[RMDB]
RNA sequence: GGGAACGACUCGAGUAGAGUCGAAAAAGCACGUACGCGUGCAAGUGCAAAUCGCCUGAUGGCUGCUUGUAGGUAUGCGAAUAUAUAUGAGUCAGUGAAUAUGCCUCCCCGGCAUAACAGGAAGAAAACUAUUUUUUCCCUUCGGGGAAAAAAUAGUAAAAGAAACAACAACAACAAC
Reactivity to DMS in 0.01 (KOAc 150mM, MgCl2 10mM, bicine 150mM(pH8.5), 24C), signal-to-noise 2, nucleotides 027 to 126: a020g040c010a000c000g020u040a030c230g000c040g040u000g000c000a010a070g000u030g020c190a070a080a090u040c140g030c000c010u030g000a030u060g010g070c040u000g000c020u010u000g030u000a060g000g050u010a020u020g000c250g010a070a050u050a040u040a020u000a040u000g010a010g000u010c050a040g000u020g000a090a190u000a050u000g010c000c020u050c010c000c010c170g000g010c000a010u010a020a170c050a050g000g040a130a060g000a060a050a030
Reactivity to 2A3 in 0.01 (KOAc 150mM, MgCl2 10mM, bicine 150mM(pH8.5), 24C), signal-to-noise 3, nucleotides 027 to 126: a030g000c010a000c000g010u170a010c110g030c050g100u000g010c010a040a100g120u070g070c030a020a000a160u210c100g030c010c020u020g040a080u220g150g010c010u000g000c000u040u010g000u030a010g020g070u070a000u000g050c090g100a180a000u010a000u010a000u010a000u040g040a020g110u180c000a000g000u010g210a180a110u100a000u090g000c000c010u040c020c000c010c010g050g030c000a000u040a050a040c000a000g010g080a150a030g050a120a210a000

An RNA of 177 nucleotides, treated with DMS and 2A3 and read out base by base. High DMS reactivity at an A or C suggests that its Watson-Crick edge is free. Values cover nucleotides 27 to 126. For DMS the reverse transcriptase was MarathonRT.